Source: RMDB library OK2TRN, as collected in RNAgym. Chemical mapping of a 177-nucleotide RNA with 2A3 and DMS. The RNA was probed in 150 mM KOAc, 10 mM MgCl2 and 150 mM bicine (pH 8.5) at 24 C. The DMS profile rests on 20,503 reads. DMS adducts were read by reverse transcription with MarathonRT.

[RMDB]
RNA sequence: GGGAACGACUCGAGUAGAGUCGAAAAAGCGAUGAGUACCGUACUAUCUAGGAUCGAUAGUCAUCUAGGACAGGUACGAUCCGAUCUCCAUGCUGUGACUCAGUCUAGCCAUGACUACGUACGACUAAUGUUUAACACUGUUCGCAGUGUUAAACAUAAAAGAAACAACAACAACAAC
Reactivity to 2A3 in 0.01 (KOAc 150mM, MgCl2 10mM, bicine 150mM(pH8.5), 24C), signal-to-noise 9, nucleotides 027 to 126: a010g140c100g030a060u070g030a020g060u030a050c020c010g000u040a020c020u030a030u100c040u070a050g140g060a090u080c050g050a070u040a050g040u040c010a070u070c090u110a050g020g130a030c040a090g050g060u080a050c020g000a010u000c000c020g020a040u010c030u020c050c000a060u080g000c020u070g040u110g100a050c010u040c180a040g040u010c020u040a020g040c050c020a070u090g020a060c030u060a040c090g060u050a030c020g040a030c080u130a120
Reactivity to DMS in 0.01 (KOAc 150mM, MgCl2 10mM, bicine 150mM(pH8.5), 24C), signal-to-noise 9, nucleotides 027 to 126: a090g010c110g010a040u000g010a150g020u000a040c050c010g010u010a120c050u000a080u000c090u000a160g010g010a050u000c050g010a120u000a050g010u000c050a060u010c090u000a170g010g000a040c070a060g010g020u000a040c030g000a060u000c020c010g000a100u010c050u000c040c070a060u010g010c040u010g010u000g010a060c040u010c130a080g010u000c030u010a070g010c090c100a060u000g000a080c110u000a060c090g010u000a040c070g010a120c160u010a090